Annotation:
This 177-nucleotide RNA was probed chemically with DMS and 2A3. It was measured as part of the RMDB library TTRDEL. For 2A3 the reverse transcriptase was SuperScript II with manganese. The DMS profile rests on 1,813 reads. The reactions ran in a buffer of 150 mM KOAc, 10 mM MgCl2 and 150 mM bicine (pH 8.5), at 24 C. For 2A3, 4,400 sequencing reads were counted.

RNA sequence: GGGAACGACUCGAGUAGAGUCGAAAAGAUAUGGAUCGAACCAUAAGACAGCGUGUCGGAAACGAUUACGCAAUGACGUGGUCCGAUCCUAAGUCAAAACUAAAACGGACUUCGGUCCGUUUUAGAAGACUUCAUUUAGCUUCGGCUAAAUGAAGUCAAAAGAAACAACAACAACAAC
Reactivity to DMS in 0.01 (KOAc 150mM, MgCl2 10mM, bicine 150mM(pH8.5), 24C), signal-to-noise 2, nucleotides 027 to 126: g010a030u010a080u020g010g010a000u000c000g010a010a010c000c010a020u010a070a210g000a040c110a260g000c010g040u000g020u000c010g040g010a030a020a020c000g000a020u010u010a010c000g010c000a100a070u000g000a050c230g020u000g000g000u010c000c000g000a020u000c000c000u000a010a020g010u000c010a110a050a110a180c000u000a010a000a000a020c000g010g000a010c000u000u010c210g030g000u000c000c000g010u010u000u000u000a000g030a100a100
Reactivity to 2A3 in 0.01 (KOAc 150mM, MgCl2 10mM, bicine 150mM(pH8.5), 24C), signal-to-noise 2, nucleotides 027 to 126: g010a010u000a000u060g000g000a000u010c000g000a010a030c000c000a000u040a110a220g290a090c030a010g000c000g020u000g000u010c010g000g030a010a010a000c020g020a020u170u300a070c010g000c030a010a190u200g070a100c210g000u010g000g000u000c000c010g000a010u000c000c000u000a010a000g010u000c000a000a030a100a120c010u010a000a000a000a000c010g000g010a000c000u090u110c300g020g000u000c000c000g000u000u010u000u000a000g000a000a010